[RMDB]
Source: RMDB library OK1LIB, as collected in RNAgym. An RNA of 177 nucleotides, treated with 2A3 and read out base by base. Reactivities are given for positions 27 through 126. 2A3 adducts were read by reverse transcription with SuperScript II with manganese.
RNA sequence: GGGAACGACUCGAGUAGAGUCGAAAAGGUAGGCGUCAGAACGGAAAAACAUGGCAUCCAUAAUGCGUUCAUCGUUUACAUGCUUCUUUAGGGUGCGCUUGUCUGGUCCCCCGUCUUGCACCAAAGCCCCGGUAGCAUCGUUCGCGAUGCUACCGGGAAAAGAAACAACAACAACAAC
Reactivity to 2A3 in 0.01 (KOAc 150mM, MgCl2 10mM, bicine 150mM(pH8.5), 24C), signal-to-noise 2, nucleotides 027 to 126: g100g010u040a020g010g000c050g000u070c110a000g070a080a000c100g080g000a030a010a010a000a020c090a050u100g030g020c060a070u100c040c070a120u190a170a080u190g150c030g000u000u170c020a000u010c060g040u040u030u030a190c170a260u220g000c000u030u040c000u100u190u200a000g000g120g000u060g020c020g030c030u030u200g050u080c000u000g100g000u110c010c020c000c000c000g020u020c060u130u120g040c060a040c020c060a090a040a010g020c000